[RMDB]
RNA sequence: GGGAACGACUCGAGUAGAGUCGAAAAUAAACGCAACCGACACGGAUGCAACGGUGACCGACGCCGAGAUCGAGGCCUUCUUUGCUGAAGAGGCUGCCGCUCUCGUCUGAAGGAACCAGCCUGGCUCAGCGUGCUGCUGUGCAGCGGCCAGGCUUCACCACCUCUUACUGUUCGCAGUAAGAGGUGGAAAAGAAACAACAACAACAAC
Reactivity to 2A3 in 0.01 (KOAc 150mM, MgCl2 10mM, bicine 150mM(pH8.5), 24C), signal-to-noise 2, nucleotides 027 to 156: u100a000a080a020c080g040c010a030a010c030c030g120a140c090a150c300g050g010a050u020g000c020a090a000c040g000g010u030g060a240c030c030g000a020c000g000c020c000g000a010g000a010u020c020g030a040g000g040c020c010u220u120c010u080u100u170g270c210u210g060a030a030g000a010g050g000c000u070g170c180c000g000c000u000c000u000c010g030u000c010u050g030a030a040g010g000a000a010c000c000a000g010c000c000u000g000g000c010u030c100a030g040c110g110u090g010c010u030g030c020u110g130u140g150c020a000g000c000g000g000c000c000a000g000g000c000u000u010c000a010